[RMDB]
RNA sequence: GGGAACGACUCGAGUAGAGUCGAAAAUGGUGAAUGGAACACCGUUCCUGGCCAUCACAAAAACCCAAAGUGUCGCGCUAAAAAGUUAGUCGUGGAGUCACGGAAUGGCAGGAGAGAGUAUGUUCAAGAUGCUGUCCGUAGACACGGAGACGUUAUACACCCACUGAGUAUUCGUACUCAGUGGGUGAAAAGAAACAACAACAACAAC
Reactivity to DMS in 0.01 (KOAc 150mM, MgCl2 10mM, bicine 150mM(pH8.5), 24C), signal-to-noise 3, nucleotides 027 to 156: u010g000g010u000g020a090a030u020g010g020a080a040c010a150c140c140g010u010u000c000c000u000g010g000c010c000a030u000c060a090c030a050a060a080a070a170c010c000c010a040a150a170g020u000g000u000c070g030c090g050c040u000a040a110a120a160a220g000u000u000a150g010u000c050g000u020g020g010a200g010u020c020a060c020g010g010a080a110u010g020g030c000a130g030g010a300g010a140g010a180g050u000a110u010g040u000u000c050a080a270g010a150u000g010c010u000g000u000c010c030g040u000a120g020a070c070a090c010g020g010a300g000a060c040g000u000u000a120u000a300
Reactivity to 2A3 in 0.01 (KOAc 150mM, MgCl2 10mM, bicine 150mM(pH8.5), 24C), signal-to-noise 3, nucleotides 027 to 156: u050g020g030u120g080a140a120u080g040g030a040a020c160a170c160c140g010u020u020c000c000u000g070g000c000c010a030u060c040a020c090a140a130a010a140a130c030c010c030a030a090a030g110u070g020u110c020g000c000g010c090u090a020a000a030a050a160g170u140u050a030g030u110c040g030u010g020g100a080g020u040c050a000c000g010g030a180a100u030g030g000c010a020g080g000a010g010a010g000a010g090u200a120u300g200u140u070c010a080a020g030a150u090g010c020u010g010u000c010c000g000u010a090g010a060c030a010c030g020g010a070g010a020c020g010u060u040a100u070a090

The record gives the reactivity of an RNA of 207 nucleotides to DMS and 2A3. Conditions: 150 mM KOAc, 10 mM MgCl2 and 150 mM bicine (pH 8.5), 24 C. Values cover nucleotides 27 to 156. The DMS profile rests on 5,640 reads. Source: RMDB library OK3TST, as collected in RNAgym.